An RNA of 177 nucleotides, treated with DMS and 2A3 and read out base by base. The 2A3 profile rests on 1,041 reads. Values cover nucleotides 27 to 126. For DMS, 1,128 sequencing reads were counted. For DMS the reverse transcriptase was MarathonRT.
RNA sequence: GGGAACGACUCGAGUAGAGUCGAAAAAAGAAUACGAUGAUAUUAUUUGCGUUUCAAAUCGAACAAUUCUUCUCGGAGCGAUCUGAGGUUUUAAUGGAGAUAGCGGUUCCUGCGCAACCCAUUGAUCCUACUGUGUUCUGUUCGCAGAACACAGUAGAAAAGAAACAACAACAACAAC
Reactivity to DMS in 0.01 (KOAc 150mM, MgCl2 10mM, bicine 150mM(pH8.5), 24C), signal-to-noise 2, nucleotides 027 to 126: a020a050g010a030a030u010a070c040g010a060u020g030a180u000a060u000u000a110u000u040u010g030c100g000u000u000u000c080a040a130a080u000c020g040a090a100c150a090a080u000u000c030u000u000c010u000c020g010g000a010g000c300g000a050u000c010u000g000a040g000g020u000u000u000u000a050a040u000g010g020a070g010a210u000a090g000c020g000g030u000u000c040c060u000g020c030g010c010a040a110c070c000c000a050u000u010g000a100u000c110
Reactivity to 2A3 in 0.01 (KOAc 150mM, MgCl2 10mM, bicine 150mM(pH8.5), 24C), signal-to-noise 1, nucleotides 027 to 126: a020a000g040a050a010u060a060c030g040a050u170g050a020u060a090u300u100a100u100u180u100g070c030g000u000u010u050c070a070a070a050u060c010g020a020a020c030a040a090u070u000c020u130u030c010u000c030g020g010a020g000c050g020a020u020c020u000g000a000g000g090u000u040u080u170a020a060u040g030g000a040g040a070u060a030g070c010g020g000u020u000c030c000u010g000c000g000c020a000a010c000c000c010a000u000u080g000a050u080c000